[RMDB]
RNA sequence: GGGAACGACUCGAGUAGAGUCGAAAAUAACAUAUACCACUUGCGGUAUAGCAACCAUCAAAGAUCGCAUUUGACAGUUAUGGCAAAAGGACGGCAACGUCAGCGCGUUCCGAGACGCAACGGUCGCUUAAUAGGAAAGAUUCGUCUUUCCUAUUAAAAAAGAAACAACAACAACAAC
Reactivity to DMS in 0.01 (KOAc 150mM, MgCl2 10mM, bicine 150mM(pH8.5), 24C), signal-to-noise 9, nucleotides 027 to 126: u020a080a110c120a130u000a030u010a030c010c000a130c230u020u030g020c140g010g010u000a010u010a040g010c150a090a130c050c030a120u020c090a050a090a090g010a050u010c040g010c040a140u000u010u010g000a040c070a070g010u010u020a040u000g010g000c070a030a040a080a090g000g000a070c030g000g000c110a060a070c030g010u000c030a070g010c090g000c020g000u000u000c020c030g000a180g000a050c100g010c080a060a070c090g000g010u000c030g010c090
Reactivity to 2A3 in 0.01 (KOAc 150mM, MgCl2 10mM, bicine 150mM(pH8.5), 24C), signal-to-noise 9, nucleotides 027 to 126: u080a020a010c050a030u070a010u030a080c000c020a060c090u100u200g070c100g010g010u020a010u020a060g030c020a020a070c010c010a050u120c050a060a050a040g060a040u070c020g010c060a070u050u030u120g060a040c040a020g020u080u080a070u110g060g010c040a040a060a060a060g080g020a030c020g020g010c030a070a020c040g050u040c040a030g020c050g000c010g050u080u010c020c020g030a040g010a040c030g020c050a050a020c040g030g010u030c010g000c030
Chemical mapping of a 177-nucleotide RNA with DMS and 2A3. Values are in units of 0.01, from 0 to 300, in steps of 10. For 2A3 the reverse transcriptase was SuperScript II with manganese. The reactions ran in a buffer of 150 mM KOAc, 10 mM MgCl2 and 150 mM bicine (pH 8.5), at 24 C. For DMS the reverse transcriptase was MarathonRT.